[RMDB]
RNA sequence: GGGAACGACUCGAGUAGAGUCGAAAAGAUAUGGACCACGGAGGGAGACGAUCGGAAACGAUCCGUCAUCGAUCUCCCGUGGUCCUAAGUCAAAAUCAGAAUGCUACGUUCGCGUAGCAUUCUGAAACCUUGUUCAAAAGUUCGCUUUUGAACAAGGAAAAGAAACAACAACAACAAC
Reactivity to 2A3 in 0.01 (KOAc 150mM, MgCl2 10mM, bicine 150mM(pH8.5), 24C), signal-to-noise 4, nucleotides 027 to 126: g020a010u060a010u150g000g000a000c000c000a000c010g050g030a200g060g070g010a030g020a030c010g010a010u030c010g010g030a050a090a070c080g040a090u030c150c070g040u030c010a100u210c010g120a180u020c000u030c000c000c010g000u000g000g010u000c000c000u000a020a000g000u010c020a030a010a010a250u040c000a000g020a020a000u010g000c000u000a010c000g040u030u090c230g000c010g170u010a000g000c010a000u000u010c000u000g000a000a010a000
Reactivity to DMS in 0.01 (KOAc 150mM, MgCl2 10mM, bicine 150mM(pH8.5), 24C), signal-to-noise 4, nucleotides 027 to 126: g000a030u000a300u010g000g010a010c000c000a010c010g000g000a070g010g010g000a100g010a020c020g000a030u000c000g000g000a060a090a190c090g000a040u000c080c070g010u000c030a120u000c130g010a190u010c000u000c050c010c070g040u000g000g000u000c000c000u000a000a070g010u010c040a060a050a090a130u000c000a000g000a020a010u010g000c000u000a000c000g010u010u010c230g010c010g030u000a000g000c010a000u000u000c010u000g010a010a050a100

This 177-nucleotide RNA was probed chemically with 2A3 and DMS. DMS adducts were read by reverse transcription with MarathonRT. For DMS, 4,865 sequencing reads were counted. It was measured as part of the RMDB library TTRDEL. 2A3 is a SHAPE reagent: it acylates the 2'-hydroxyl of flexible nucleotides of all four kinds.